[RMDB]
RNA sequence: GGGAACGACUCGAGUAGAGUCGAAAAUGAAUCAGAUCUUUACGCUCGACCAGAUAGUUGAACAGACGCAAUUCCAUCGGUGAAAUCACAUCUUCGGCGUCAUGCAGAAUAAAACCAGCAAAAGCGAAGAUUACUCAUGGUUCGCCAUGAGUAAUCUAAAAGAAACAACAACAACAAC
Reactivity to DMS in 0.01 (KOAc 150mM, MgCl2 10mM, bicine 150mM(pH8.5), 24C), signal-to-noise 2, nucleotides 027 to 126: u010g010a130a040u010c140a100g020a090u010c010u000u000u000a130c130g020c040u000c040g010a060c070c030a070g000a020u020a080g050u000u000g020a080a120c050a090g020a070c030g020c070a120a090u000u000c060c040a080u000c080g000g000u000g000a020a090a130u000c090a050c100a070u020c050u000u000c100g000g020c000g000u000c040a060u010g000c020a070g010a090a050u000a010a070a100a050c060c050a100g000c050a050a050a060a120g030c130g010a060
Reactivity to 2A3 in 0.01 (KOAc 150mM, MgCl2 10mM, bicine 150mM(pH8.5), 24C), signal-to-noise 2, nucleotides 027 to 126: u150g010a000a050u080c060a030g050a110u000c030u000u050u030a040c040g010c060u100c020g060a050c000c060a050g020a230u070a080g050u050u070g050a180a040c040a050g040a050c040g010c090a010a010u160u050c000c020a000u050c070g000g010u050g050a000a080a040u120c030a040c000a050u040c020u090u030c040g030g000c000g030u000c010a040u090g040c010a030g060a120a000u100a070a100a040a000c040c010a020g020c030a000a130a060a000g090c040g120a100